[RMDB]
RNA sequence: GGGAACGACUCGAGUAGAGUCGAAAACUUUACAAUAUGUAGUAGUUGGAAAUAUAGUGGCAAUAACAUUAGGUAAAAUGGUUUAUGGUGGUUUAGGUCAUAAUAUCUUUAACCCAGCUUUAGUAGAACCUAAUGCUGGUUUCGACCAGCAUUAGGUAAAAGAAACAACAACAACAAC
Reactivity to DMS in 0.01 (KOAc 150mM, MgCl2 10mM, bicine 150mM(pH8.5), 24C), signal-to-noise 2, nucleotides 027 to 126: c040u010u000u010a040c020a150a130u000a070u010g000u000a050g000u000a020g020u000u000g000g000a110a110a120u000a050u000a090g030u000g020g010c070a080a040u000a090a040c070a030u000u000a050g030g010u000a030a030a100a070u010g010g000u000u000u010a060u020g000g010u010g000g000u000u000u040a030g010g000u000c030a030u020a050a040u000a030u000c040u000u000u000a080a100c040c000c030a070g020c100u000u000u010a050g020u020a100g020a070